[RMDB]
Chemical mapping of a 177-nucleotide RNA with 2A3 and DMS.
Source: RMDB library OK2TST, as collected in RNAgym.
For DMS the reverse transcriptase was MarathonRT.
The RNA was probed in 150 mM KOAc, 10 mM MgCl2 and 150 mM bicine (pH 8.5) at 24 C.
Values cover nucleotides 27 to 126.

RNA sequence: GGGAACGACUCGAGUAGAGUCGAAAAUGUAUCCACGGGAGGUGCAUGAUAAGGAUGACGCUGAUACGCAUGCAAAGCCUUCAUCCAAUCGCCAGUUUCGAGUGAUGUGUGGAACUGCUGUGGCAGGGCCCUGAUCAUCGUUCGCGAUGAUCAGGGCAAAAGAAACAACAACAACAAC
Reactivity to 2A3 in 0.01 (KOAc 150mM, MgCl2 10mM, bicine 150mM(pH8.5), 24C), signal-to-noise 1, nucleotides 027 to 126: u060g010u000a110u030c030c020a050c100g010g060g000a030g000g000u010g030c050a060u090g030a020u030a120a070g110g020a070u080g030a060c070g030c070u070g020a080u080a200c170g000c020a000u040g060c040a140a000a050g030c010c000u070u000c020a040u000c060c000a040a020u000c020g000c050c020a030g000u070u110u010c070g030a120g020u140g040a060u060g060u030g000u020g070g010a030a090c020u000g000c010u050g010u130g160g000c000a030g060g090
Reactivity to DMS in 0.01 (KOAc 150mM, MgCl2 10mM, bicine 150mM(pH8.5), 24C), signal-to-noise 2, nucleotides 027 to 126: u000g010u020a130u000c010c030a060c080g050g000g010a070g000g040u000g010c010a060u020g030a080u010a110a180g020g000a040u000g000a070c300g010c040u010g010a060u010a120c170g000c070a090u010g040c000a040a100a180g010c010c020u030u000c010a010u000c050c000a200a050u010c050g000c050c070a140g010u010u000u000c050g000a100g000u000g020a070u010g010u000g030u000g000g000a020a070c060u000g020c020u000g000u000g000g030c050a050g000g000